[RMDB]
RNA sequence: GGGAACGACUCGAGUAGAGUCGAAAAGAUAUGGAUGGAGCUCGAUAAGUUGGUCUCGGAAACGAGACGCAACUUUUGACGAGUUAAGUCCUAAGUCAAAAUCUCUAACCGUUCGCGGUUAGAGAAACCUGUUUAGCUAGUUCGCUAGCUAAACAGGAAAAGAAACAACAACAACAAC
Reactivity to DMS in 0.01 (KOAc 150mM, MgCl2 10mM, bicine 150mM(pH8.5), 24C), signal-to-noise 2, nucleotides 027 to 126: g010a040u020a290u010g000g000a000u010g010g080a190g010c000u010c010g000a170u010a020a010g020u000u000g010g000u000c000u000c000g000g010a060a050a170c020g020a020g000a020c000g000c020a000a010c000u000u000u000u000g010a210c080g000a020g000u000u010a090a210g010u000c010c000u000a020a140g000u020c030a100a100a110a120u000c000u010c000u010a000a000c000c000g010u000u020c260g020c000g030g000u020u020a000g000a010g000a010a020a060
Reactivity to 2A3 in 0.01 (KOAc 150mM, MgCl2 10mM, bicine 150mM(pH8.5), 24C), signal-to-noise 2, nucleotides 027 to 126: g010a010u110a020u130g010g000a010u020g080g050a050g020c000u010c030g090a160u060a300a020g000u010u000g040g000u000c000u000c000g000g030a060a040a010c010g000a000g000a000c020g030c020a000a000c000u030u020u030u110g090a040c010g020a000g010u050u030a030a010g000u000c000c000u010a110a000g030u000c010a020a050a120a290u040c010u000c000u000a010a020c010c000g020u040u100c300g000c020g140g010u000u000a000g000a000g000a000a010a000
Source information:
Chemical mapping of a 177-nucleotide RNA with DMS and 2A3. It was measured as part of the RMDB library TTRDEL. The reactions ran in a buffer of 150 mM KOAc, 10 mM MgCl2 and 150 mM bicine (pH 8.5), at 24 C. The DMS profile rests on 1,901 reads. For 2A3 the reverse transcriptase was SuperScript II with manganese.